An RNA of 177 nucleotides, treated with 2A3 and DMS and read out base by base. For DMS the reverse transcriptase was MarathonRT.
RNA sequence: GGGAACGACUCGAGUAGAGUCGAAAAGAUAUGGAAUGUCCUAGGGAGACCCUAUCGGAAACGAUAGAAGGUCGACGAUCUAGGCAUUCCUAAGUCAAACCAGAGGACAGUUCGCUGUCCUCUGGAACAUGUCGUGUUACUUCGGUAACACGACAUGAAAAGAAACAACAACAACAAC
Reactivity to 2A3 in 0.01 (KOAc 150mM, MgCl2 10mM, bicine 150mM(pH8.5), 24C), signal-to-noise 1, nucleotides 027 to 126: g010a010u030a010u100g000g030a020a000u040g230u300c020c020u000a000g000g000g040a100g000a010c020c010c000u010a000u000c000g000g040a040a060a020c020g010a000u010a010g200a300a120g030g020u000c010g000a120c000g040a030u000c000u000a010g000g010c010a000u000u000c000c000u010a020a020g000u000c060a110a030a060c010c010a010g010a000g020g010a000c000a000g030u130u170c300g130c240u000g000u010c000c000u000c010u000g000g000a000a010
Reactivity to DMS in 0.01 (KOAc 150mM, MgCl2 10mM, bicine 150mM(pH8.5), 24C), signal-to-noise 2, nucleotides 027 to 126: g000a030u000a270u000g000g000a010a010u000g000u040c010c000u000a000g010g000g010a070g010a020c000c020c000u000a010u000c000g000g000a070a050a070c000g000a010u000a010g020a180a130g000g010u000c010g040a090c300g010a110u010c000u000a000g000g010c000a000u000u010c000c010u000a030a080g010u010c010a150a110a260c000c000a000g000a000g000g000a020c000a000g010u000u020c300g040c000u000g000u000c000c000u010c000u000g000g010a070a070